[RMDB]
RNA sequence: GGGAACGACUCGAGUAGAGUCGAAAAUUAGAGAGCAGACUGUGCAACCUUUAGAGUCUGCAUUGGGCCUAGGUCUCAUUGAGAGCAGAUAGAGAGCACACUGUGCAACCUCUAGAGUCGGCAUUGGCUCAUAGGUCACUUUCGAGUGACCUAUGAGAAAAGAAACAACAACAACAAC
Reactivity to DMS in 0.01 (KOAc 150mM, MgCl2 10mM, bicine 150mM(pH8.5), 24C), signal-to-noise 5, nucleotides 027 to 126: u020u010a030g030a070g020a170g010c030a030g010a060c090u000g030u000g010c070a110a140c110c020u010u010u020a100g020a130g000u010c020u010g010c020a060u010u010g000g020g000c040c050u020a150g000g010u000c020u020c010a090u010u020g020a120g010a090g010c050a060g000a150u000a080g010a020g000a180g000c010a020c010a070c110u010g000u020g020c010a060a060c160c010u010c000u000a030g000a100g000u010c110g000g000c030a100u000u020g000g000
Reactivity to 2A3 in 0.01 (KOAc 150mM, MgCl2 10mM, bicine 150mM(pH8.5), 24C), signal-to-noise 7, nucleotides 027 to 126: u200u100a040g020a020g000a010g030c010a010g020a130c070u040g000u060g100c030a090a110c010c010u080u130u130a120g020a040g110u010c020u000g010c000a010u010u050g010g000g020c010c020u050a120g090g050u060c020u020c030a040u130u240g170a160g030a030g090c030a010g020a050u110a020g060a020g000a010g020c000a000c010a050c070u070g000u010g030c020a080a080c020c000u000c010u020a020g000a010g070u070c020g030g040c090a090u050u190g080g000
The data come from the RNA Mapping Database (RMDB), library OK1LIB. An RNA of 177 nucleotides, treated with DMS and 2A3 and read out base by base. Reactivities are given for positions 27 through 126. The reactions ran in a buffer of 150 mM KOAc, 10 mM MgCl2 and 150 mM bicine (pH 8.5), at 24 C. For 2A3 the reverse transcriptase was SuperScript II with manganese. High DMS reactivity at an A or C suggests that its Watson-Crick edge is free. High 2A3 reactivity points to a flexible backbone, as in loops and unpaired stretches. For DMS the reverse transcriptase was MarathonRT.